[RMDB]
Structure probing data (2A3 and DMS) for a 207-nucleotide construct. For DMS the reverse transcriptase was MarathonRT. For 2A3 the reverse transcriptase was SuperScript II with manganese. The 2A3 profile rests on 1,587 reads. Conditions: 150 mM KOAc, 10 mM MgCl2 and 150 mM bicine (pH 8.5), 24 C.

RNA sequence: GGGAACGACUCGAGUAGAGUCGAAAAGGGAACAUUCGUGUUCCCAAAAAGCGUACUACGUUGGAGGUUGGCAAGCCGUGGGUCCCAAAUAGGACCCAUCGGUGAUGACCCAACUACCCACCCAACGUAUCGCAAAAAAUGUAGAUUCGUCUACAAAGCGUCCUAGUAAAUUCGUUUACUAGGACGCAAAAGAAACAACAACAACAAC
Reactivity to 2A3 in 0.01 (KOAc 150mM, MgCl2 10mM, bicine 150mM(pH8.5), 24C), signal-to-noise 2, nucleotides 027 to 156: g030g010g000a020a000c040a040u060u100c170g070u060g040u020u060c000c000c100a060a000a000a000a000g050c030g060u100a080c040u000a000c010g000u000u000g010g000a010g020g010u030u000g000g050c040a080a050g000c000c000g000u010g000g000g000u000c010c000c000a090a200a150u260a080g000g000a010c000c000c000a040u120c050g000g030u040g040a070u110g000a060c000c000c000a000a000c000u030a000c030c050c000a040c040c020c000a000a000c010g000u000a000u150c030g000c000a000a030a000a000a220a000u090g000u010a000g010a040u070u050c170g010u000c230u020a000c000a030a050a000
Reactivity to DMS in 0.01 (KOAc 150mM, MgCl2 10mM, bicine 150mM(pH8.5), 24C), signal-to-noise 1, nucleotides 027 to 156: g000g040g010a020a030c000a130u000u000c300g040u010g000u020u010c020c000c000a010a000a020a110a130g020c000g000u010a150c200u000a010c010g000u000u000g000g000a300g030g010u030u000g000g000c070a100a170g010c000c000g060u000g000g000g010u000c000c030c020a110a110a270u030a050g000g000a010c010c000c010a010u000c000g040g060u000g050a080u000g040a170c300c020c040a010a000c020u000a070c010c000c010a300c160c020c000a040a010c000g010u000a010u000c020g050c020a000a020a040a090a010a010u000g010u000a050g040a160u010u000c220g000u010c000u000a010c020a050a090a220